[RMDB]
RNA sequence: GGGAACGACUCGAGUAGAGUCGAAAAAUAUUUUCUCUUGAUGUGUUCAAGUCUUUCGAACUUUGUGAUGUCGUCUGUGGUGAUGCCUUGAACUGAACCCUGUCCUUUCAGACAAAUAAGCAUGUUCUUUUUGUUCCAAACGCCAAGCCCGAUCAUGCAAAAGUGAAUCGUUCGCGAUUCACUUUUGAAAAGAAACAACAACAACAAC
Reactivity to DMS in 0.01 (KOAc 150mM, MgCl2 10mM, bicine 150mM(pH8.5), 24C), signal-to-noise 1, nucleotides 027 to 156: a090u000a060u000u010u020u010c000u000c020u000u000g000a090u010g040u010g030u010u000c030a010a080g020u010c020u010u000u010c040g010a060a090c070u000u000u020g070u000g000a060u000g010u000c050g000u010c050u000g030u000g000g020u010g010a070u010g030c000c010u010u000g020a070a130c060u000g010a040a100c020c020c020u000g000u010c010c040u020u000u000c070a110g020a070c070a010a040a080u000a090a110g000c040a100u010g010u000u000c030u000u000u000u000u000g010u000u010c010c030a080a070a100c070g060c030c030a040a090g020c030c000c010g010a070u000c060a090u010g020
Reactivity to 2A3 in 0.01 (KOAc 150mM, MgCl2 10mM, bicine 150mM(pH8.5), 24C), signal-to-noise 2, nucleotides 027 to 156: a000u130a120u050u050u080u030c020u000c000u010u020g020a020u020g080u020g020u160u070c020a080a070g010u060c080u090u090u120c060g080a120a040c010u070u070u130g080u080g020a060u110g030u060c020g070u020c030u050g080u070g050g000u020g010a040u080g020c020c000u030u060g030a030a030c010u000g050a080a090c050c010c030u020g070u070c040c020u050u090u100c030a040g030a060c000a010a080a080u140a050a000g020c040a050u020g000u100u070c000u000u060u030u080u060g020u030u040c020c000a080a110a000c020g030c070c010a020a030g020c030c020c010g100a060u170c020a040u240g110
Structure probing data (DMS and 2A3) for a 207-nucleotide construct. The reactions ran in a buffer of 150 mM KOAc, 10 mM MgCl2 and 150 mM bicine (pH 8.5), at 24 C. The 2A3 profile rests on 639 reads. For DMS the reverse transcriptase was MarathonRT.